[RMDB]
RNA sequence: GGGAACGACUCGAGUAGAGUCGAAAAGCGUUGAUCGUGGCCGUCGGCGCGUUGUUUGGCAGGACGGCGCUGAUGCUGGCGGCGCUGUUCGCCGUCGGAAUGAACGUCUACGUCUACUUCAAUAGCGAACGUUGUAAAGGUUCGCCUUUACAACGUUAAAAGAAACAACAACAACAAC
Reactivity to DMS in 0.01 (KOAc 150mM, MgCl2 10mM, bicine 150mM(pH8.5), 24C), signal-to-noise 9, nucleotides 027 to 126: g010c010g010u000u000g000a010u000c210g020u000g000g010c040c010g010u000c040g010g010c000g010c080g010u000u000g010u000u000u000g010g010c040a120g010g000a020c010g010g000c000g010c020u000g000a110u010g010c060u000g000g010c010g000g000c000g010c130u010g000u000u000c010g010c050c060g010u000c070g010g000a030a030u000g010a070a070c020g010u000c010u000a030c020g000u000c010u000a030c030u000u000c030a030a030u000a090g030c040g000
Reactivity to 2A3 in 0.01 (KOAc 150mM, MgCl2 10mM, bicine 150mM(pH8.5), 24C), signal-to-noise 6, nucleotides 027 to 126: g010c010g000u010u010g020a050u090c090g010u010g020g010c010c010g010u000c020g010g020c040g000c150g030u020u050g070u010u040u090g090g010c090a080g000g020a000c000g000g000c010g000c000u010g000a040u120g030c090u060g100g010c000g000g000c000g000c000u030g020u040u060c030g020c050c030g020u050c040g030g060a060a050u070g020a070a020c010g000u000c010u010a000c000g010u010c010u010a020c000u020u020c020a030a040u040a110g020c020g030
An RNA of 177 nucleotides, treated with DMS and 2A3 and read out base by base. For 2A3 the reverse transcriptase was SuperScript II with manganese. For DMS, 51,187 sequencing reads were counted. It was measured as part of the RMDB library OK2TRN.